An RNA of 177 nucleotides, treated with 2A3 and read out base by base.
Reactivities are given for positions 27 through 126.

[RMDB]
RNA sequence: GGGAACGACUCGAGUAGAGUCGAAAAGCGCGCCGAAUUGAUCUCCGGGGGCAGCACCGCGAAGCUCAUCUAGCGUCCCUAACCGGAACCGCUGACCACCACCGCGUGGUGGGUGGAGCCAAACGUCCCACGGAGCAUGGUUCGCCAUGCUCCGUGGAAAAGAAACAACAACAACAAC
Reactivity to 2A3 in 0.01 (KOAc 150mM, MgCl2 10mM, bicine 150mM(pH8.5), 24C), signal-to-noise 2, nucleotides 027 to 126: g090c030g000c020g020c050c060g020a120a140u110u120g080a060u000c020u010c040c010g010g030g020g040g050c060a000g060c050a020c040c000g030c010g060a030a060g020c000u000c020a070u030c050u130a030g010c000g000u070c020c000c000u000a040a020c070c000g040g000a010a020c060c030g010c060u080g100a050c000c000a020c000c010a140c030c110g120c090g100u080g000g000u000g010g010g070u030g000g050a050g000c010c000a110a050a000c060g100u090c040
For 2A3, 969 sequencing reads were counted.